[RMDB]
RNA sequence: GGGAACGACUCGAGUAGAGUCGAAAACGCCGCGGCAGCUUGUAGCUCUGAGGACUGACUGGUGGUUAGCAGUGACUGCAAGGUAUCCAGUUCGCGCCGAUAAUCUUGAGCUCGAUGUAAUCCAUGAAGAGUAAUCUGAUUUCGAUCAGAUUACUCUAAAAGAAACAACAACAACAAC
Reactivity to 2A3 in 0.01 (KOAc 150mM, MgCl2 10mM, bicine 150mM(pH8.5), 24C), signal-to-noise 3, nucleotides 027 to 126: c010g080c040c000g000c050g000g030c030a040g040c020u010u100g060u110a020g000c000u000c010u030g050a050g040g010a030c020u020g010a030c040u100g030g090u070g000g250u140u080a020g000c000a030g020u050g210a180c030u020g040c010a030a060g070g040u080a070u060c020c000a020g000u060u060c040g000c060g010c060c000g020a050u090a120a100u080c070u030u060g010a040g060c000u010c020g020a020u090g030u070a070a060u030c010c010a030u110g100a010
Reactivity to DMS in 0.01 (KOAc 150mM, MgCl2 10mM, bicine 150mM(pH8.5), 24C), signal-to-noise 4, nucleotides 027 to 126: c140g000c070c060g010c090g000g000c050a080g000c050u000u010g020u000a060g010c030u000c020u010g000a150g000g000a090c040u000g010a080c080u000g000g050u010g000g010u000u000a160g010c030a030g010u010g020a100c060u000g010c040a070a060g000g010u000a060u020c060c040a040g010u000u000c150g010c170g010c080c030g000a120u000a130a080u000c050u000u000g000a080g010c050u000c030g000a040u010g000u000a060a090u010c020c020a050u010g010a120
Chemical mapping of a 177-nucleotide RNA with 2A3 and DMS. The data come from the RNA Mapping Database (RMDB), library OK2TRN. DMS adducts were read by reverse transcription with MarathonRT. The DMS profile rests on 4,217 reads. The RNA was probed in 150 mM KOAc, 10 mM MgCl2 and 150 mM bicine (pH 8.5) at 24 C. For 2A3, 3,270 sequencing reads were counted.